[RMDB]
RNA sequence: GGGAACGACUCGAGUAGAGUCGAAAAGCAACUUACCUGGAUGAGGUCGGCAUUUUAGUCCCAUUUUACAGAUGAGUCAACCGACUUCAGAGAAGGUAAUAAAUGACUCGUGCAGGUGCAUAGCCACAGCAUGGUAGAUAUUUGUGCAAGGCCAGCAACCGGAUUUAAUAUUCGUAUUAAAUCCGGUAAAAGAAACAACAACAACAAC
Reactivity to DMS in 0.01 (KOAc 150mM, MgCl2 10mM, bicine 150mM(pH8.5), 24C), signal-to-noise 2, nucleotides 027 to 156: g060c020a040a100c130u000u000a000c010c000u000g010g010a300u000g010a000g000g020u000c010g000g000c030a080u020u010u000u000a210g030u000c010c000c010a070u010u000u000u020a250c190a140g010a050u030g010a090g010u010c020a080a080c000c000g000a030c010u000u010c000a080g000a300g010a020a030g000g010u000a010a030u010a030a080a130u010g000a050c010u000c040g010u000g050c030a080g020g050u000g000c010a070u000a120g010c000c010a020c000a180g010c000a300u000g000g060u000a040g000a120u000a070u000u000u000g030u000g010c010a060a050g000g030c000c000a040g010c110a150
Reactivity to 2A3 in 0.01 (KOAc 150mM, MgCl2 10mM, bicine 150mM(pH8.5), 24C), signal-to-noise 3, nucleotides 027 to 156: g010c020a010a050c020u030u000a020c010c010u040g110g080a090u020g010a010g000g010u000c000g030g030c090a110u080u060u030u210a090g000u020c010c010c010a000u100u110u050u060a120c100a020g090a050u040g000a040g050u030c030a030a020c020c000g000a000c000u000u000c020a000g020a000g010a080a030g000g000u010a010a000u100a030a100a030u100g050a030c020u030c090g000u020g020c060a070g050g000u070g010c040a100u180a190g020c050c010a000c030a020g020c010a020u050g050g050u070a030g040a120u060a090u120u090u130g040u020g010c010a030a040g050g030c060c040a020g080c000a060
The data come from the RNA Mapping Database (RMDB), library OK3TST. An RNA of 207 nucleotides, treated with DMS and 2A3 and read out base by base. For DMS the reverse transcriptase was MarathonRT. 2A3 adducts were read by reverse transcription with SuperScript II with manganese. Conditions: 150 mM KOAc, 10 mM MgCl2 and 150 mM bicine (pH 8.5), 24 C.